[RMDB]
RNA sequence: GGGAACGACUCGAGUAGAGUCGAAAACGACGAGCGUCGCCGGCACGACCGCCCGCGCAACCUGAGGCAGCCCCGGCCGCGGCAGAUAGACCACGAACAGGUACAUCCCGCCCGCCUCGAGCAACUGUGUAAAACAAGGUUUCGACCUUGUUUUACAAAAAGAAACAACAACAACAAC
Reactivity to 2A3 in 0.01 (KOAc 150mM, MgCl2 10mM, bicine 150mM(pH8.5), 24C), signal-to-noise 1, nucleotides 027 to 126: c020g110a010c070g020a010g060c040g060u060c030g010c030c010g030g050c030a020c100g050a070c040c010g040c040c020c010g020c010g000c030a050a070c020c050u100g030a050g020g030c010a010g010c030c000c000c000g030g000c020c030g000c010g000g000c010a010g020a060u110a040g060a030c000c000a040c070g050a110a010c060a090g000g040u050a040c020a060u060c010c020c000g010c010c020c030g000c010c010u020c020g060a020g000c020a010a060c050u120g020
Reactivity to DMS in 0.01 (KOAc 150mM, MgCl2 10mM, bicine 150mM(pH8.5), 24C), signal-to-noise 5, nucleotides 027 to 126: c070g020a120c070g000a090g020c060g020u000c050g020c050c050g010g030c100a120c060g010a060c070c060g000c030c020c040g010c070g010c080a070a080c070c040u000g010a120g010g010c050a120g000c030c030c040c020g000g000c050c050g010c030g010g010c040a080g010a080u010a060g010a060c020c020a080c100g020a090a100c170a060g000g000u010a050c080a080u000c020c020c030g010c030c040c030g000c040c010u000c030g020a090g010c090a070a080c070u020g000
Chemical mapping of a 177-nucleotide RNA with 2A3 and DMS. For DMS the reverse transcriptase was MarathonRT. Source: RMDB library OK2TRN, as collected in RNAgym. The RNA was probed in 150 mM KOAc, 10 mM MgCl2 and 150 mM bicine (pH 8.5) at 24 C. Values cover nucleotides 27 to 126. 2A3 is a SHAPE reagent: it acylates the 2'-hydroxyl of flexible nucleotides of all four kinds.